[RMDB]
RNA sequence: GGGAACGACUCGAGUAGAGUCGAAAACGUCUUGUGCACAGAGAGUCUAGGGCCCUCAGCCACAGUCUUUGCUUCUCUCUGCCUCAUGGUGGCGCUGCUGGCAGCAGGUCUUGGUUCAACCACCAGGUGAGUCCUCAGUUCUAUUAGGCCCUGCUCAUAAUGGGCUAUAUUUCGAUAUAGCCCAUUAAAAAGAAACAACAACAACAAC
Reactivity to DMS in 0.01 (KOAc 150mM, MgCl2 10mM, bicine 150mM(pH8.5), 24C), signal-to-noise 2, nucleotides 027 to 156: c040g020u010c040u000u000g030u000g020c100a110c090a130g000a080g000a040g020u000c040u010a080g020g050g030c010c010c030u000c060a130g040c000c010a060c100a080g000u000c040u010u000u000g000c030u010u000c010u010c060u000c040u000g000c050c040u000c040a100u000g010g010u010g000g020c050g000c020u000g000c040u010g020g030c060a140g020c040a030g010g010u000c020u010u010g020g000u010u010c070a090a040c070c050a070c050c020a080g020g030u010g010a120g030u000c030c000u010c030a120g000u000u010c030u000a080u010u020a080g000g020c020c000c020u000g010c010u020c030a240
Reactivity to 2A3 in 0.01 (KOAc 150mM, MgCl2 10mM, bicine 150mM(pH8.5), 24C), signal-to-noise 2, nucleotides 027 to 156: c000g020u010c060u030u100g020u060g070c110a010c080a080g050a000g010a010g100u100c040u260a030g000g000g000c010c010c000u120c020a020g040c010c000a070c020a030g030u020c030u040u150u200g020c070u100u090c010u000c000u030c030u110g010c010c020u050c010a060u130g050g000u040g060g000c050g000c050u040g000c010u000g040g010c060a070g050c030a030g010g040u070c040u050u110g020g030u080u060c000a080a070c060c010a020c000c020a020g000g010u070g060a070g080u070c000c010u050c010a040g040u120u000c030u150a190u170u110a020g020g010c000c010c010u020g030c000u000c010a020
Source information: The record gives the reactivity of an RNA of 207 nucleotides to DMS and 2A3. The reactions ran in a buffer of 150 mM KOAc, 10 mM MgCl2 and 150 mM bicine (pH 8.5), at 24 C. For DMS, 6,655 sequencing reads were counted. It was measured as part of the RMDB library OK3TST. For DMS the reverse transcriptase was MarathonRT.